[RMDB]
RNA sequence: GGGAACGACUCGAGUAGAGUCGAAAAGGUCCUCGCUUCGGCGAGGACCAGAGCACCACACCUGCGGGAGUUAAGGCCAAACGGACAGCCGGGUGCAAAGCCAAUUGUUUAAGUUCGCUUAAACAAAACGGAAUACGAAAUUCGUUUCGUAUUCCGUAAAAGAAACAACAACAACAAC
Reactivity to DMS in 0.01 (KOAc 150mM, MgCl2 10mM, bicine 150mM(pH8.5), 24C), signal-to-noise 2, nucleotides 027 to 126: g010g010u020c000c010u000c000g050c000u000u010c200g020g010c010g010a000g030g000a000c000c010a000g030a100g000c060a020c020c060a120c060a050c030c010u000g020c130g030g020g020a130g000u000u000a080a060g000g030c020c030a050a080a070c180g010g000a060c060a140g010c010c000g000g000g000u000g030c050a080a020a170g000c030c040a100a170u020u000g020u000u000u000a010a000g000u010u010c280g020c000u000u000a020a030a020c000a020a010a090